[RMDB]
RNA sequence: GGGAACGACUCGAGUAGAGUCGAAAAAAGGGUAGAGACAUGAUGAAUGUUCUCACCUGAGUUAGAACCAAACCCAGCGCAGGCAGCUGCCCUGAGCUUUGUUAUUACAAUUUUGGCCUGACAUGCGCCCCGAGAGAACGUUCGCGUUCUCUCGGGGAAAAGAAACAACAACAACAAC
Reactivity to 2A3 in 0.01 (KOAc 150mM, MgCl2 10mM, bicine 150mM(pH8.5), 24C), signal-to-noise 1, nucleotides 027 to 126: a000a000g000g000g000u080a000g070a000g000a000c000a000u040g000a090u270g000a120a000u010g020u190u000c000u000c000a000c000c000u000g020a000g000u010u000a000g000a000a010c000c000a150a150a140c000c000c040a060g080c000g060c010a000g060g000c010a020g070c020u220g070c020c000c000u010g000a010g000c000u100u130u000g040u000u090a170u210u250a050c030a280a120u040u040u000u070g000g040c010c000u000g020a030c020a160u090g000c010g000
Chemical mapping of a 177-nucleotide RNA with 2A3. For 2A3 the reverse transcriptase was SuperScript II with manganese.